[RMDB]
RNA sequence: GGGAACGACUCGAGUAGAGUCGAAAAAGAUCGACGGGUUUUACAUGCGCAUGACCCUGAAAGUGCUGACCCUGAGCGACGAUCUGGGGGUGUACCGCAACGACAGGAUGCACCGCGCGGUGAGCGCCAGCCGCCGGCGCGAGCUGAGCGACCAGGAUCGUAUCCAAGUUUUCGAACUUGGAUACGAAAAAGAAACAACAACAACAAC
Reactivity to 2A3 in 0.01 (KOAc 150mM, MgCl2 10mM, bicine 150mM(pH8.5), 24C), signal-to-noise 1, nucleotides 027 to 156: a000g030a080u100c100g040a040c070g060g010g010u040u020u000u100a110c160a070u240g000c010g000c020a070u060g050a080c010c000c000u020g020a040a040a000g050u050g040c010u020g020a040c000c000c030u050g020a050g080c030g170a140c070g020a040u050c020u050g000g020g010g000g000u030g000u010a060c000c040g070c080a090a050c070g060a020c040a010g090g000a110u090g030c000a000c080c010g000c040g000c010g030g020u070g030a070g020c030g060c010c000a020g000c030c010g050c050c080g110g000c000g000c000g000a000g000c040u020g030a000g010c030g050a070c050c000a010g080g040a050
Reactivity to DMS in 0.01 (KOAc 150mM, MgCl2 10mM, bicine 150mM(pH8.5), 24C), signal-to-noise 1, nucleotides 027 to 156: a130g010a060u000c030g000a220c120g010g020g000u010u010u030u000a110c080a110u000g040c080g170c010a200u000g000a080c000c010c020u010g000a080a110a130g010u000g020c070u000g020a070c000c010c020u000g030a170g040c020g000a140c040g000a090u000c030u010g010g000g080g070g060u010g030u010a020c030c020g000c020a080a180c070g020a150c010a090g040g030a090u000g000c000a080c030c000g030c050g080c050g030g010u000g000a300g010c050g010c050c030a140g010c020c010g030c030c000g000g000c000g010c030g000a260g000c020u000g010a090g000c030g010a100c000c070a030g030g000a110